[RMDB]
RNA sequence: GGGAACGACUCGAGUAGAGUCGAAAAGAUAUGGAUAGACGGGAGGUAGGCCACUCGGAAACGAGUGGACCCCAGCCUCCCGUCUAUCCUAAGUCAAAAGCUAUUCGUAGUUCGCUACGAAUAGCAAGCUAACCUUUAUCUUCGGAUAAAGGUUAGCAAAAGAAACAACAACAACAAC
Reactivity to DMS in 0.01 (KOAc 150mM, MgCl2 10mM, bicine 150mM(pH8.5), 24C), signal-to-noise 2, nucleotides 027 to 126: g000a050u000a300u000g000g010a000u010a000g030a020c020g000g000g000a020g000g020u000a140g000g000c020c000a010c000u000c000g000g000a070a060a160c000g000a010g020u000g000g020a060c040c030c100c080a190g000c010c000u000c000c000c000g000u000c000u000a000u010c010c000u000a010a040g010u000c060a090a100a080a110g000c010u010a020u010u000c010g020u000a000g010u000u000c180g010c000u000a010c000g010a000a000u000a000g010c000a010a010
The record gives the reactivity of an RNA of 177 nucleotides to DMS. The reactions ran in a buffer of 150 mM KOAc, 10 mM MgCl2 and 150 mM bicine (pH 8.5), at 24 C. Values cover nucleotides 27 to 126. It was measured as part of the RMDB library TTRDEL.